[RMDB]
RNA sequence: GGGAACGACUCGAGUAGAGUCGAAAAACACGGAACUUCGGUUCCGUGUAUAGGGACGAAAUAACACGAUAGCGCUUGUCGCCGGAGCAAAAAGGCGGAAAAACUGCAUCCUCUUCGGAGGAUGCAAGCAACGCAUCUAAUUCGUUAGAUGCGUUGCAAAAGAAACAACAACAACAAC
Reactivity to DMS in 0.01 (KOAc 150mM, MgCl2 10mM, bicine 150mM(pH8.5), 24C), signal-to-noise 2, nucleotides 027 to 126: a020c000a000c010g010g010a000a000c000u000u000c160g050g000u000u000c000c010g030u000g010u000a020u010a040g030g000g010a030c020g000a070a060a070u010a070a070c100a090c090g000a080u010a060g050c090g030c040u000u000g000u000c060g030c000c030g010g000a090g000c120a020a020a040a050a110g010g030c030g000g000a030a040a020a080a070c180u000g000c000a000u000c000c000u000c000u000u000c190g040g000a010g000g000a000u010g000c030a000a050
Reactivity to 2A3 in 0.01 (KOAc 150mM, MgCl2 10mM, bicine 150mM(pH8.5), 24C), signal-to-noise 2, nucleotides 027 to 126: a000c000a010c000g010g000a010a010c000u060u090c240g080g000u000u030c000c000g000u000g000u010a010u030a000g000g030g020a030c030g070a180a000a000u170a080a020c030a030c110g110a060u070a020g070c050g000c070u040u050g030u090c020g000c000c000g050g010a060g070c140a050a090a000a030a030g010g010c040g000g030a090a080a010a000a010c050u030g000c000a000u010c000c000u000c010u010u050c190g120g000a000g000g010a000u000g000c000a000a010

Source: RMDB library M2PK50, as collected in RNAgym. This 177-nucleotide RNA was probed chemically with DMS and 2A3. The 2A3 profile rests on 2,492 reads. For DMS the reverse transcriptase was MarathonRT.